[RMDB]
Annotation:
This 177-nucleotide RNA was probed chemically with DMS and 2A3.
RNA sequence: GGGAACGACUCGAGUAGAGUCGAAAAAGACGUCAGGUACGCCUGACGUCAAUAGUUCAACUCCAUACAGAAUUGUGGUCUCAGUUCUGUAUAAGUUGAGCUACGCGGACUCUACGGAGUCCGCGAAGCUAAUUCUGUCGUUCGCGACAGAAUUAGCAAAAGAAACAACAACAACAAC
Reactivity to DMS in 0.01 (KOAc 150mM, MgCl2 10mM, bicine 150mM(pH8.5), 24C), signal-to-noise 3, nucleotides 027 to 126: a090g010a010c000g010u000c000a000g010g030u000a100c300g030c010c000u000g010a000c000g020u000c010a020a050u010a000g010u000u000c000a010a000c010u000c170c140a030u000a010c000a010g000a020a020u000u000g010u020g020g010u030c140u010c000a020g020u000u000c000u010g000u000a000u000a040a010g000u000u000g000a000g010c010u000a020c030g020c010g000g000a030c000u000c000u000a130c170g010g000a020g000u010c000c010g020c020g000a010a050
Reactivity to 2A3 in 0.01 (KOAc 150mM, MgCl2 10mM, bicine 150mM(pH8.5), 24C), signal-to-noise 9, nucleotides 027 to 126: a000g000a000c000g000u000c000a000g020g010u080a050c260g090c020c000u000g000a000c000g000u000c000a000a010u010a000g000u000u000c000a000a000c000u040c090c050a000u000a010c000a000g020a010a010u030u030g040u110g160g270u120c130u030c170a010g000u000u000c000u010g000u000a000u010a020a000g000u000u000g000a000g000c000u020a060c010g000c000g000g010a000c000u000c010u030a090c300g040g000a000g000u000c000c000g000c000g000a020a010
The RNA was probed in 150 mM KOAc, 10 mM MgCl2 and 150 mM bicine (pH 8.5) at 24 C. It was measured as part of the RMDB libraries RFM100 and RFMREP. Reactivities are rounded to 0.1 and cut off at 0 and 3. For 2A3 the reverse transcriptase was SuperScript II with manganese.